[RMDB]
An RNA of 177 nucleotides, treated with 2A3 and read out base by base. For 2A3 the reverse transcriptase was SuperScript II with manganese. Conditions: 150 mM KOAc, 10 mM MgCl2 and 150 mM bicine (pH 8.5), 24 C.
RNA sequence: GGGAACGACUCGAGUAGAGUCGAAAAGCACGUCCGGCAAGUCCCGUGCGAACACUUGAGCUCCGGCUUGGCCGCUCUUGUGGAUUAGGACGUUCUAGCUCCGGCUUGGCCGCUAGUUCGUCCGAAAACCAGCACGUGGUUUCGACCACGUGCUGGUAAAAGAAACAACAACAACAAC
Reactivity to 2A3 in 0.01 (KOAc 150mM, MgCl2 10mM, bicine 150mM(pH8.5), 24C), signal-to-noise 1, nucleotides 027 to 126: g000c010a000c030g020u000c040c000g070g000c090a100a000g100u070c030c020c100g000u000g000c010g060a070a010c010a000c040u000u120g000a000g000c030u030c010c020g040g010c100u000u190g280g000c000c010g010c000u000c000u010u000g010u080g030g030a000u080u080a030g030g000a020c020g000u000u000c000u000a000g000c010u000c140c020g000g240c080u140u210g150g000c000c040g030c000u000a000g020u000u000c000g000u000c000c000g000a000a000a000